An RNA of 177 nucleotides, treated with 2A3 and DMS and read out base by base. The DMS profile rests on 9,870 reads. The reactions ran in a buffer of 150 mM KOAc, 10 mM MgCl2 and 150 mM bicine (pH 8.5), at 24 C.
[RMDB]
RNA sequence: GGGAACGACUCGAGUAGAGUCGAAAAGAUAUGGAGAGCUGACAUGCACCUUGUCGGAAACGACAAUGUGCAACAGCAGCCUCCUAAGUCAAAGAUAGCUAGAGAGCUUCGGCUCUCUAGCUAUCAACAUUCAAUUGUUGUUCGCAACAAUUGAAUGAAAAGAAACAACAACAACAAC
Reactivity to 2A3 in 0.01 (KOAc 150mM, MgCl2 10mM, bicine 150mM(pH8.5), 24C), signal-to-noise 2, nucleotides 027 to 126: g010a020u070a020u130g010g010a020g020a060g000c010u010g060a150c020a100u050g000c000a000c000c020u010u010g020u000c020g030g040a070a050a030c010g010a000c010a000a010u000g010u000g010c010a010a020c020a020g020c000a010g010c000c000u000c000c000u010a160a020g020u030c010a040a030a100g010a010u010a000g020c010u000a000g000a000g000a010g010c020u080u090c260g010g010c010u020c000u000c010u000a000g000c000u000a000u000c000a000a000
Reactivity to DMS in 0.01 (KOAc 150mM, MgCl2 10mM, bicine 150mM(pH8.5), 24C), signal-to-noise 6, nucleotides 027 to 126: g010a020u000a300u010g000g010a010g010a170g030c000u000g000a070c080a240u000g000c010a010c000c070u000u000g000u010c000g000g010a090a070a140c010g000a010c000a010a000u000g010u000g010c000a010a030c200a190g020c010a010g000c010c000u000c000c000u000a020a080g000u000c020a090a120a120g000a010u000a000g000c000u000a000g000a020g010a010g010c000u000u010c250g030g010c000u000c000u000c000u010a000g000c000u000a000u000c000a080a170